[RMDB]
RNA sequence: GGGAACGACUCGAGUAGAGUCGAAAAUGACGCGUACCCGUACGGAAACCAUCCAACCACUCCAUCCGAAACGUACGGCGUCGAUCCAUCCGAAACGUACGUGACACCUUCUCGCUUGGUACUGCACUGUCAGGAGUUAGUCGGAUGGGAAAGCAUGCUCCGUCUGUUUAUUCGUAAACAGACGGAGAAAAGAAACAACAACAACAAC
Reactivity to 2A3 in 0.01 (KOAc 150mM, MgCl2 10mM, bicine 150mM(pH8.5), 24C), signal-to-noise 3, nucleotides 027 to 156: u110g010a020c020g050c030g020u030a050c000c040c000g030u050a040c080g040g010a100a030a040c000c010a050u070c030c010a070a070c040c010a080c020u050c030c010a090u010c080c010g030a030a020a120c010g000u010a000c000g060g030c070g030u030c010g010a030u040c060c010a030u020c030c000g020a010a070a020c010g040u060a040c020g020u050g050a020c030a060c030c030u100u030c070u090c070g120c080u080u120g030g010u100a060c080u070g040c030a040c210u090g000u070c030a030g010g060a080g050u030u040a060g020u050c010g000g000a000u000g000g000g000a040a010a000g070c060a040u150g040
Reactivity to DMS in 0.01 (KOAc 150mM, MgCl2 10mM, bicine 150mM(pH8.5), 24C), signal-to-noise 1, nucleotides 027 to 156: u000g010a050c060g010c030g000u010a100c010c010c170g000u000a100c060g050g020a130a140a200c040c040a060u000c020c010a070a090c010c020a060c120u000c020c000a130u000c040c030g000a070a140a060c000g020u000a030c040g000g020c040g030u000c040g000a060u000c020c090a050u000c070c000g020a060a090a100c020g050u000a020c040g000u020g040a040c000a130c040c010u030u000c040u010c100g030c080u010u010g000g000u020a070c020u000g030c040a110c010u010g030u000c050a090g000g000a150g030u000u000a050g040u000c010g030g000a020u000g030g010g000a060a010a080g020c040a170u010g010
The record gives the reactivity of an RNA of 207 nucleotides to 2A3 and DMS. Reactivities are given for positions 27 through 156. It was measured as part of the RMDB library OK3TST. The RNA was probed in 150 mM KOAc, 10 mM MgCl2 and 150 mM bicine (pH 8.5) at 24 C. The DMS profile rests on 1,929 reads. For 2A3 the reverse transcriptase was SuperScript II with manganese. High DMS reactivity at an A or C suggests that its Watson-Crick edge is free.